[RMDB]
Chemical mapping of a 170-nucleotide RNA with 2A3 and DMS. The RNA was probed in 150 mM KOAc, 10 mM MgCl2 and 150 mM bicine (pH 8.5) at 24 C. The data come from the RNA Mapping Database (RMDB), library 15KLIB.

RNA sequence: GGGAACGACUCGAGUAGAGUCGAAAAUCCCCAACCCGCGGGCCGGCUGUUCUUCUUUCUCUUUCCUCGUCUUCCUCGGUCAACCUCCGGAGUUCCUCUUCCUCCUCCUUGCUGAGGGACUUUCCUCUAAGAUUUAAGUUCGCUUAAAUCAAAAGAAACAACAACAACAAC
Reactivity to 2A3 in 0.01 (KOAc 150mM, MgCl2 10mM, bicine 150mM(pH8.5), 24C), signal-to-noise 9, nucleotides 027 to 129: u020c010c000c000c000a020a030c010c000c010g010c010g010g040g020c010c010g030g010c050u040g030u070u030c010u040u010c000u020u090u010c040u010c000u050u060u020c010c020u010c010g050u020c040u080u040c010c010u010c020g010g000u050c020a060a080c010c010u040c010c020g010g000a040g010u030u030c000c000u000c000u040u020c000c020u010c010c000u030c000c000u030u090g020c040u040g020a040g010g000g010a040c020u030u050u030c010c010u040c010u040a110a030
Reactivity to DMS in 0.01 (KOAc 150mM, MgCl2 10mM, bicine 150mM(pH8.5), 24C), signal-to-noise 9, nucleotides 027 to 129: u020c020c000c000c100a080a070c040c000c030g030c060g030g020g060c050c040g000g010c050u010g010u020u020c040u010u020c030u010u020u010c050u010c020u000u000u000c010c020u020c050g030u010c060u020u020c070c060u000c070g000g010u010c090a070a150c090c020u000c010c040g000g000a110g000u030u010c020c000u020c030u000u000c040c030u040c010c010u000c010c010u000u030g020c070u030g030a080g000g000g000a080c080u010u020u030c030c020u010c060u040a090a160